The data come from the RNA Mapping Database (RMDB), library OK3TST. An RNA of 207 nucleotides, treated with 2A3 and read out base by base. The 2A3 profile rests on 482 reads.
[RMDB]
RNA sequence: GGGAACGACUCGAGUAGAGUCGAAAAUGCACAACAUAUUUGGCAAAAUAUAGGCAUUCAAAAAGUGCUGUGGAUUUUUGUAUAUAUUCAUGGAGUAUUAGCUCAAUUUUGCUACACUGAUAUAUCUCAUUGUGAUGAAGUCAAAGCUUUCAGUGCACCCAUAGACUUGCUUCGGCAAGUCUAUGGGAAAAGAAACAACAACAACAAC
Reactivity to 2A3 in 0.01 (KOAc 150mM, MgCl2 10mM, bicine 150mM(pH8.5), 24C), signal-to-noise 1, nucleotides 027 to 156: u110g000c020a020c020a140a000c010a040u060a190u120u130u140g050g000c060a060a000a060a000u090a030u120a100g060g000c020a020u110u110c090a070a090a030a080a000g090u070g040c020u030g000u020g040g000a020u030u000u020u200u130g070u120a080u020a010u030a000u190u080c030a010u060g050g000a050g090u050a110u200u110a070g000c020u020c020a020a110u070u000u040u080g000c020u100a010c060a000c030u020g020a020u000a000u050a060u190c050u020c070a100u110u090g010u080g030a070u020g000a020a020g020u040c030a050a040a040g010c000u000u050u120c080a010g020u000g000c000a050